[RMDB]
The record gives the reactivity of an RNA of 177 nucleotides to 2A3 and DMS. Values cover nucleotides 27 to 126. 2A3 adducts were read by reverse transcription with SuperScript II with manganese. DMS adducts were read by reverse transcription with MarathonRT. Source: RMDB library OK1LIB, as collected in RNAgym. The DMS profile rests on 7,236 reads.

RNA sequence: GGGAACGACUCGAGUAGAGUCGAAAAGGAAGCCUCAUGCGCGAGACACGCAAUGCAUGAGAGGUUAGCAAGACACGAAGCCCAGUGUAACUACCUGACAGUAACUUAGAAUACUCGCAGGGCUCCAAAAUAAAUAAUUAUUCGUAAUUAUUUAUUUAAAAGAAACAACAACAACAAC
Reactivity to 2A3 in 0.01 (KOAc 150mM, MgCl2 10mM, bicine 150mM(pH8.5), 24C), signal-to-noise 4, nucleotides 027 to 126: g050g020a080a030g030c000c000u010c010a010u010g000c010g010c010g050a110g090a080c100a030c110g040c030a060a160u260g000c000a010u000g010a030g030a020g030g020u030u010a010g040c090a080a020g040a090c010a010c030g060a030a020g050c000c000c000a010g000u020g010u040a030a050c020u040a060c010c020u040g050a070c010a020g030u000a030a020c010u060u050a050g080a300a100u070a080c020u060c140g000c010a010g000g020g000c010u020c020c000a060
Reactivity to DMS in 0.01 (KOAc 150mM, MgCl2 10mM, bicine 150mM(pH8.5), 24C), signal-to-noise 5, nucleotides 027 to 126: g010g010a120a080g020c070c000u000c020a020u010g000c000g010c030g010a180g010a170c280a190c040g010c020a170a120u050g010c020a000u000g000a020g010a060g000g000u000u000a040g020c120a090a090g000a120c050a020c010g010a110a090g000c000c000c000a170g010u000g000u000a060a090c050u010a120c010c000u000g000a160c060a030g000u020a030a050c060u040u050a120g000a200a060u010a010c010u010c130g030c030a020g000g000g010c080u030c030c040a050